[RMDB]
Chemical mapping of a 177-nucleotide RNA with 2A3 and DMS. 2A3 adducts were read by reverse transcription with SuperScript II with manganese. The reactions ran in a buffer of 150 mM KOAc, 10 mM MgCl2 and 150 mM bicine (pH 8.5), at 24 C. The data come from the RNA Mapping Database (RMDB), libraries RFM100 and RFMREP.
RNA sequence: GGGAACGACUCGAGUAGAGUCGAAAACGGCGACAGCUGGUUCCACUCGAAAUGACUCUAAGGUCAGCCUGACUGGAGGUUGGUGGCGGGGUAGAGCACUAAUUGGACGUUUAGGGAGGGAAACUUCAACUCAAAAUCGUUUCGACGAUUUUGAGUUAAAAGAAACAACAACAACAAC
Reactivity to 2A3 in 0.01 (KOAc 150mM, MgCl2 10mM, bicine 150mM(pH8.5), 24C), signal-to-noise 3, nucleotides 027 to 126: c020g010g020c030g030a070c040a070g020c000u060g040g000u030u000c020c040a060c050u040c060g050a020a040a100u130g040a020c020u010c060u220a110a130g040g010u020c010a000g030c040c030u090g020a090c040u060g050g030a020g050g010u060u030g030g010u040g030g000c150g010g010g010g010u080a030g010a040g090c050a030c110u040a030a180u060u080g050g020a050c040g020u080u130u100a020g000g060g030a130g020g010g000a040a060a050c030u050u040c060
Reactivity to DMS in 0.01 (KOAc 150mM, MgCl2 10mM, bicine 150mM(pH8.5), 24C), signal-to-noise 4, nucleotides 027 to 126: c090g020g000c020g010a160c280a070g010c010u000g000g000u000u000c030c010a060c080u010c060g000a070a070a110u010g010a070c010u010c120u020a090a100g000g000u000c010a040g010c150c070u010g020a110c070u020g020g010a040g020g010u000u010g030g020u040g020g010c140g010g000g000g000u010a080g000a070g020c080a060c110u020a050a100u000u020g000g030a080c160g010u010u010u030a070g000g000g010a110g010g010g000a070a040a090c100u020u010c210